RNA sequence: GGGAACGACUCGAGUAGAGUCGAAAAGCUGAAAAUGAUUUAUGGGUAGUGGAAUUGGUUAACCGUAAGACCUUUGGUUGAAAAACUAUGAAAUUAAGCCUCAGAUAUUUUAUCUUUGGUUACGGGAAAAAUCAUUUACCGUUCGCGGUAAAUGAAACUUCAACAAGAGGUUCGCCUCUUGUUGAAGAAAAGAAACAACAACAACAAC
Reactivity to 2A3 in 0.01 (KOAc 150mM, MgCl2 10mM, bicine 150mM(pH8.5), 24C), signal-to-noise 2, nucleotides 027 to 156: g030c030u010g030a000a040a080a080u100g030a070u100u220u240a110u060g000g000g060u080a080g020u050g040g080a070a070u040u050g020g020u050u090a110a030c010c010g010u020a070a000g050a030c000c000u010u060u120g030g020u050u050g010a030a000a040a040a000c060u080a100u180g030a090a080a040u120u070a110a000g000c000c020u010c010a000g050a020u000a140u040u270u070u090a030u090c000u020u010u020g000g010u040u030a040c020g000g090g000a000a160a030a000a000u000c000a000u010u010u000a000c000c000g030u020u070c300g020c000g050g000u000a000a000a000u000g000a010a010a000